Chemical mapping of a 177-nucleotide RNA with DMS and 2A3. DMS (dimethyl sulfate) methylates the pairing face of unpaired adenines and cytosines. The reactions ran in a buffer of 150 mM KOAc, 10 mM MgCl2 and 150 mM bicine (pH 8.5), at 24 C. Reactivities are given for positions 27 through 126. For 2A3, 1,102 sequencing reads were counted.
RNA sequence: GGGAACGACUCGAGUAGAGUCGAAAACAGGCCAAUGGGAGGUGUUUCACGAAAACCGGGAAAAGCGAAUUUCUGCCUUAUAAACACCGGAAUACAGACCAUUAGCGCCCGAUUUCGAAUAGGUAAACUGCUCUUGAGUAUUCGUACUCAAGAGCAGAAAAGAAACAACAACAACAAC
Reactivity to DMS in 0.01 (KOAc 150mM, MgCl2 10mM, bicine 150mM(pH8.5), 24C), signal-to-noise 2, nucleotides 027 to 126: c140a100g000g000c090c000a060a030u020g010g000g000a070g010g010u000g010u040u000u000c170a150c120g000a060a050a040a220c050c090g000g000g020a060a060a150a060g000c100g050a130a050u030u020u030c070u000g030c030c010u000u030a030u040a080a110a050c140a120c010c040g000g000a150a020u030a070c170a060g000a050c030c000a000u000u000a160g010c000g010c000c000c030g000a120u020u050u010c000g000a090a050u000a140g000g000u000a090a160a200
Reactivity to 2A3 in 0.01 (KOAc 150mM, MgCl2 10mM, bicine 150mM(pH8.5), 24C), signal-to-noise 2, nucleotides 027 to 126: c000a020g080g070c010c040a020a000u030g000g000g020a130g110g020u020g060u050u150u070c060a050c120g040a000a000a040a140c070c000g000g010g010a000a000a080a000g060c060g050a050a100u080u090u000c030u140g030c000c000u180u120a160u050a190a100a000c080a010c000c000g000g000a050a000u160a050c020a000g060a060c000c000a030u060u020a030g020c000g000c000c000c000g050a040u030u000u110c070g060a070a050u110a090g040g080u150a030a030a030